RNA sequence: GGGAACGACUCGAGUAGAGUCGAAAAAUAAGCUCUAUGAUGUUAUUUUACAUAUGUUAGACUAAUGAAAUGAUUUGAUUGUAAUUUAGUAACUGAGCUUAUAAACAAAUGCUGUUCGCAGCAUUUGCCAUACAUAGCAGUUCGCUGCUAUGUAUGGAAAAGAAACAACAACAACAAC
Reactivity to DMS in 0.01 (KOAc 150mM, MgCl2 10mM, bicine 150mM(pH8.5), 24C), signal-to-noise 5, nucleotides 027 to 126: a030u000a010a000g010c000u000c010u000a240u010g010a110u010g000u000u010a020u000u010u000u000a020c010a040u000a070u010g010u000u000a040g000a100c080u020a090a110u010g010a130a100a110u010g010a070u000u000u000g010a070u000u000g010u000a020a030u000u000u000a030g010u010a020a070c070u010g000a010g010c000u000u000a010u010a060a080a240c010a010a010a010u000g010c000u000g020u010u010c240g030c000a010g000c000a000u000u000u000g010
Reactivity to 2A3 in 0.01 (KOAc 150mM, MgCl2 10mM, bicine 150mM(pH8.5), 24C), signal-to-noise 8, nucleotides 027 to 126: a010u010a000a000g000c010u000c020u030a090u140g100a120u040g060u030u010a040u030u050u020u020a010c010a020u120a030u190g050u060u060a060g040a090c050u100a130a130u200g110a130a100a110u130g050a120u090u090u160g050a070u030u050g010u010a020a010u020u010u040a020g010u010a030a010c030u000g000a000g000c000u010u000a020u050a020a080a000c010a000a000a000u000g010c000u010g030u050u060c210g000c070a000g000c000a000u000u010u000g000